[RMDB]
RNA sequence: GGGAACGACUCGAGUAGAGUCGAAAAGGAGGCCAGUCAUGUUUUUCGACAAUGUGGUGAUCGCCGGAGUGCUGACUGUCGGCCUCAUGGUUCUGUUUUUCGCAGGGUUUGGAUUCUUUAUCUGGAAGUAAAGUCAAGGUUUCGACCUUGACUUUACAAAAGAAACAACAACAACAAC
Reactivity to DMS in 0.01 (KOAc 150mM, MgCl2 10mM, bicine 150mM(pH8.5), 24C), signal-to-noise 2, nucleotides 027 to 126: g030g010a050g020g020c010c000a050g000u060c010a020u020g010u050u010u020u010u010c030g040a050c040a090a090u020g030u010g030g020u010g020a090u020c080g010c020c010g000g000a060g000u010g010c060u010g010a050c030u020g010u020c130g020g000c010c010u000c010a050u010g000g040u010u020c020u020g010u000u000u000u070u000c040g000c030a030g000g000g020u010u000u010g000g000a080u000u000c040u000u010u010a080u010c060u000g000g000a130a120
Reactivity to 2A3 in 0.01 (KOAc 150mM, MgCl2 10mM, bicine 150mM(pH8.5), 24C), signal-to-noise 3, nucleotides 027 to 126: g150g000a020g000g000c020c010a000g020u050c030a030u190g060u030u060u000u030u080c000g020a010c010a080a090u090g040u060g040g070u120g050a110u120c070g020c030c000g020g000a010g000u080g000c000u000g020a050c010u080g060u220c030g060g000c000c010u000c020a010u090g020g000u000u050c000u030g060u050u040u020u010u120c030g010c020a020g000g020g050u060u090u040g060g060a070u080u000c000u030u170u060a150u060c030u030g030g050a150a140
The data come from the RNA Mapping Database (RMDB), libraries RFM100 and RFMREP. Chemical mapping of a 177-nucleotide RNA with DMS and 2A3. For DMS the reverse transcriptase was MarathonRT. The reactions ran in a buffer of 150 mM KOAc, 10 mM MgCl2 and 150 mM bicine (pH 8.5), at 24 C.